[RMDB]
RNA sequence: GGGAACGACUCGAGUAGAGUCGAAAAUGUGUAAGUUUGCUAGCGUGGAAGGUUCUGGUGUUUUUGUUCAUGAUAGAAUUGAAAAACAGACACCUGUGUCACAAUUUAUUGUGACACCUACUAUGCAUGCAGUUUACACAGGUACAACACAGAGUGGUAGUAUCCGUCUGUUCGCAGACGGAUACUAAAAAGAAACAACAACAACAAC
Reactivity to 2A3 in 0.01 (KOAc 150mM, MgCl2 10mM, bicine 150mM(pH8.5), 24C), signal-to-noise 3, nucleotides 027 to 156: u040g000u000g000u000a010a000g030u050u290u120g010c020u090a160g000c010g000u010g030g040a050a030g020g020u200u110c070u110g020g050u050g040u020u040u020u030u070g040u000u020c040a030u140g150a140u100a260g130a240a150u070u170g050a010a090a000a000a000c000a020g010a000c010a010c030c010u010g020u010g000u050c000a010c010a040a030u110u260u300a180u150u110g000u000g000a000c000a000c010c000u030a080c010u020a020u020g020c020a010u050g000c010a000g010u030u020u020a000c000a000c010a010g010g010u030a070c040a150a000c060a090c040a070g120a010g160u130g050g050